[RMDB]
RNA sequence: GGGAACGACUCGAGUAGAGUCGAAAACCAUGGGAUGCUCCUCCCGAUGUCCGAUUCCAUCCCUCCCCCCCGAGGGUCGCCCAGGAAUGGCGGGACCCCACUCGACUGGGGUCCGCGUUCCAUCCUUUAGGUACAUAGAGUUCGCUCUAUGUACCUAAAAAGAAACAACAACAACAAC
Reactivity to DMS in 0.01 (KOAc 150mM, MgCl2 10mM, bicine 150mM(pH8.5), 24C), signal-to-noise 1, nucleotides 027 to 126: c050c020a090u000g020g040g020a050u000g010c070u000c040c050u000c040c000c020g000a110u000g020u000c050c020g010a160u000u000c050c020a070u000c020c010c020u000c000c000c000c000c000c000c000g000a090g000g000g010u000c020g000c010c020c040a090g000g010a030a020u000g020g020c010g010g040g010a000c000c000c020c000a020c060u000c300g000a110c240u010g000g000g010g000u000c010c000g020c020g010u000u000c030c020a100u010c040c050u000u000